[RMDB]
RNA sequence: GGGAACGACUCGAGUAGAGUCGAAAAGACUGCGUGCACUAGAGACGAUAUCGAGCCGGAAAUUAAUCGAUAAUGUCUCUUGUAGUGGAUACGAUCCGGCAAGUAUCGACUACCUGUGCUCGUAGGACGAGCUCCCUAUGUUCGCAUAGGGAGCUCGAAAAGAAACAACAACAACAAC
Reactivity to 2A3 in 0.01 (KOAc 150mM, MgCl2 10mM, bicine 150mM(pH8.5), 24C), signal-to-noise 3, nucleotides 027 to 126: g050a030c000u000g000c000g000u010g000c000a000c020u030a000g000a000g000a010c020g010a010u000a000u070c000g010a000g030c000c000g000g070a080a190a090u250u290a120a110u190c000g000a000u010a060a080u160g030u000c000u000c000u010u110g000u010a020g000u030g130g010a000u000a010c010g010a030u000c010c000g000g010c040a070a000g010u000a010u000c040g080a000c000u020a030c000c030u060g000u000g000c000u000c010g000u010a000g000g030a010